[RMDB]
Structure probing data (DMS) for a 177-nucleotide construct. The RNA was probed in 150 mM KOAc, 10 mM MgCl2 and 150 mM bicine (pH 8.5) at 24 C. For DMS, 577 sequencing reads were counted.

RNA sequence: GGGAACGACUCGAGUAGAGUCGAAAAUGCUAAGAUCCGUAGUCGAAAGGGAAACAGCCCAGACCAACAGCUAAGGUCCCAAAAUAUAUGUUAAGUGGAAAAGGAUGUGGGGUUGCACAGACAACUAGCUUCUAAGUGCAUUCGUGCACUUAGAAGCAAAAGAAACAACAACAACAAC
Reactivity to DMS in 0.01 (KOAc 150mM, MgCl2 10mM, bicine 150mM(pH8.5), 24C), signal-to-noise 1, nucleotides 027 to 126: u000g000c090u000a040a080g010a080u050c110c050g000u000a120g020u000c010g000a020a100a060g000g000g030a110a180a160c140a100g010c170c040c020a140g000a080c070c070a070a110c030a040g000c000u010a050a090g000g000u000c000c020c000a030a010a080a060u020a050u030a060u000g010u000u020a030a090g000u000g000g000a050a040a010a090g030g000a080u000g040u000g000g050g020g000u000u020g010c010a030c150a120g050a100c030a040a110c000u000a060